[RMDB]
Annotation:
An RNA of 207 nucleotides, treated with 2A3 and read out base by base. 2A3 adducts were read by reverse transcription with SuperScript II with manganese.
RNA sequence: GGGAACGACUCGAGUAGAGUCGAAAAUCAUAGAAAAAAUAACGGUAAAUUAACAAAAACACUUUACUGAUAAAAAAUUAACGUGGUCCAAAAAUUUAGCCUUAUCAUAGCACUUGAUUCAGUCAUAUGUAAGGUAAAUCAUAUAUGAUUCAAGUACGUUACUGAUGAAUUUCGAUUCAUCAGUAACAAAAGAAACAACAACAACAAC
Reactivity to 2A3 in 0.01 (KOAc 150mM, MgCl2 10mM, bicine 150mM(pH8.5), 24C), signal-to-noise 1, nucleotides 027 to 156: u090c000a020u050a060g170a030a250a020a040a000a040u100a030a000c050g010g010u080a000a020a090u200u130a160a100c050a080a030a030a040a030c000a020c010u090u170u030a060c030u030g080a030u070a010a270a020a170a180a290u100u090a130a000c060g010u110g040g000u190c120c000a070a130a070a030a030u050u090u000a000g040c000c010u040u020a000u090c120a060u050a080g080c060a020c020u020u090g030a080u110u050c030a010g040u020c030a040u010a000u010g030u060a040a010g140g000u030a070a040a000u070c000a000u000a000u030a030u140g030a000u070u040c020a000a000g080u030a040c070